[RMDB]
RNA sequence: GGGAACGACUCGAGUAGAGUCGAAAAGCCAGCGGUGUGCUUUGCAUGGGUGAGGGCCAGCUGUUACCAUCAUAAAGUGGGUGGGAGGCUCUGGAGACCUCUCAGCGCCGAAGCACUCCUGCUCUUCCUGCAUCCAGGAAGAUUCUUCCAGGAUCCAGUCAUUUUAGUCGUUCGCGACUAAAAUGACAAAAGAAACAACAACAACAAC
Reactivity to 2A3 in 0.01 (KOAc 150mM, MgCl2 10mM, bicine 150mM(pH8.5), 24C), signal-to-noise 1, nucleotides 027 to 156: g010c040c070a030g000c040g040g000u050g010u000g000c000u000u030u070g000c040a020u050g070g000g070u090g040a040g000g030g060c000c000a000g000c030u050g060u140u070a070c050c020a010u070c020a020u120a190a300a120g100u300g140g150g000u060g000g030g000a030g070g000c000u000c030u030g020g000a100g110a110c030c000u040c000u010c060a060g010c060g020c210c120g010a000a000g000c000a000c000u020c000c040u060g010c000u000c000u000u000c000c010u030g000c050a080u030c060c000a010g000g010a040a020g070a190u190u050c030u060u000c040c000a000g030g030a090u090c060c020a020

The data come from the RNA Mapping Database (RMDB), library OK3TST.
An RNA of 207 nucleotides, treated with 2A3 and read out base by base.
The 2A3 profile rests on 579 reads.